[RMDB]
Structure probing data (DMS and 2A3) for a 177-nucleotide construct. DMS adducts were read by reverse transcription with MarathonRT.
RNA sequence: GGGAACGACUCGAGUAGAGUCGAAAAGAUAUGGAUUCGUCCACAACAGUGAUGACCUCGGAAACGAGCAAGCUGGUGGCGAAUCCUAAGUCAAAGCACGUGAUCUGGUUCGCCAGAUCACGUGCAACUUUAAACAAGACUUCGGUCUUGUUUAAAGAAAAGAAACAACAACAACAAC
Reactivity to DMS in 0.01 (KOAc 150mM, MgCl2 10mM, bicine 150mM(pH8.5), 24C), signal-to-noise 4, nucleotides 027 to 126: g010a020u000a300u000g010g010a010u000u010c010g010u010c010c020a020c010a100a240c000a010g020u010g010a130u000g000a080c300c010u000c000g010g000a070a110a150c010g000a000g000c030a050a120g010c010u010g010g020u010g000g000c010g000a010a000u010c000c000u000a010a040g010u000c040a090a120a140g010c000a010c000g050u000g000a020u000c000u000g000g010u000u010c290g000c000c000a000g000a000u000c010a000c000g010u000g010c000a010a010
Reactivity to 2A3 in 0.01 (KOAc 150mM, MgCl2 10mM, bicine 150mM(pH8.5), 24C), signal-to-noise 4, nucleotides 027 to 126: g020a010u080a050u170g000g010a010u010u020c040g180u150c150c010a030c010a300a180c020a050g020u030g130a300u170g060a150c050c010u020c000g000g030a050a080a050c010g010a020g040c000a060a040g020c010u020g040g000u000g000g000c010g020a010a000u000c000c000u010a060a000g010u020c040a090a050a110g010c000a000c040g040u000g000a000u000c000u000g050g000u100u180c280g060c080c000a010g010a010u000c000a010c000g000u000g000c000a000a000
Source: RMDB library TTRDEL, as collected in RNAgym. The reactions ran in a buffer of 150 mM KOAc, 10 mM MgCl2 and 150 mM bicine (pH 8.5), at 24 C.